[RMDB]
RNA sequence: GGGAACGACUCGAGUAGAGUCGAAAACGCUGGGUCCUGAAGUCCGUCCUGGUGGGAGCUGAAGCGCGCACGGCGAGGAUCACCCUGACGGUCACAGGACCUGUGCUGAAGCGCGCACGGCAACCGAAAGGUGCGAGGUGCCAGAUUCGUCUGGCAACUAUUGGGAUAGUUUCGACUAUCCCAAUAGAAAAGAAACAACAACAACAAC
Reactivity to DMS in 0.01 (KOAc 150mM, MgCl2 10mM, bicine 150mM(pH8.5), 24C), signal-to-noise 3, nucleotides 027 to 156: c030g010c020u010g030g040g000u010c000c000u000g020a090a160g020u000c000c010g040u020c000c060u000g020g060u000g010g010g010a070g040c020u000g010a080a070g010c010g030c020g040c020a300c020g000g000c000g010a100g020g010a080u000c020a050c000c010c020u000g030a060c020g050g000u000c080a300c020a030g030g000a020c010c000u000g010u000g040c010u000g000a130a040g000c020g010c000g000c030a200c010g010g000c000a090a200c010c040g000a090a120a210g000g020u000g010c040g010a080g030g010u000g000c000c000a020g010a070u000u000c300g000u000c010u000g010g020c000a020a060
Reactivity to 2A3 in 0.01 (KOAc 150mM, MgCl2 10mM, bicine 150mM(pH8.5), 24C), signal-to-noise 6, nucleotides 027 to 156: c040g000c020u040g000g010g000u010c000c000u000g070a190a030g200u080c000c000g000u000c000c010u000g000g000u010g000g020g010a020g010c000u030g030a180a040g030c010g000c000g000c030a010c030g000g010c010g020a250g030g010a030u020c000a000c000c000c010u010g000a000c010g000g040u100c070a020c000a100g000g000a000c000c010u000g010u020g000c010u060g030a140a050g000c010g000c010g010c010a010c010g050g010c040a100a080c020c010g080a100a050a030g030g010u020g020c020g030a070g050g100u060g000c000c000a010g000a020u040u120c160g050u020c140u000g000g000c010a010a020
This 207-nucleotide RNA was probed chemically with DMS and 2A3.
The DMS profile rests on 9,661 reads.
DMS adducts were read by reverse transcription with MarathonRT.
It was measured as part of the RMDB library RNAMAK.
The RNA was probed in 150 mM KOAc, 10 mM MgCl2 and 150 mM bicine (pH 8.5) at 24 C.
For 2A3 the reverse transcriptase was SuperScript II with manganese.